An RNA of 207 nucleotides, treated with 2A3 and read out base by base.
It was measured as part of the RMDB library RSTRND.
Conditions: 150 mM KOAc, 10 mM MgCl2 and 150 mM bicine (pH 8.5), 24 C.
RNA sequence: GGGAACGACUCGAGUAGAGUCGAAAAAAGAUUAACUAAGUGCUUAGCAGUUAGUUUUGCUAUGGGCGGUACGUAAAGAAAUUUGCGUGCGUUUACCUGUCAAACUCGGGGAAGCCAUUAGCGCGGUAAUCCCGAACCAAGCUCUCGCAAGAGAGAACCGUCAGUAUUUCUUCGGAAAUACUGACGGAAAAGAAACAACAACAACAAC
Reactivity to 2A3 in 0.01 (KOAc 150mM, MgCl2 10mM, bicine 150mM(pH8.5), 24C), signal-to-noise 1, nucleotides 027 to 156: a000a000g060a070u100u050a000a000c010u010a000a120g140u000g020c030u130u190a020g000c020a100g020u010u000a020g020u100u030u100u180g020c030u090a120u150g040g020g040c040g070g030u030a000c000g010u020a000a000a020g100a050a110a090u010u020u000g030c000g010u000g000c000g020u000u060u040a040c000c020u020g060u140c030a070a080a120c070u010c020g000g000g020g030a100a040g000c000c000a010u060u180a070g000c120g000c110g050g000u060a080a020u020c060c000c000g000a010a000c040c000a010a010g000c000u000c000u000c000g010c060a100a000g010a000g010a000g000a020a050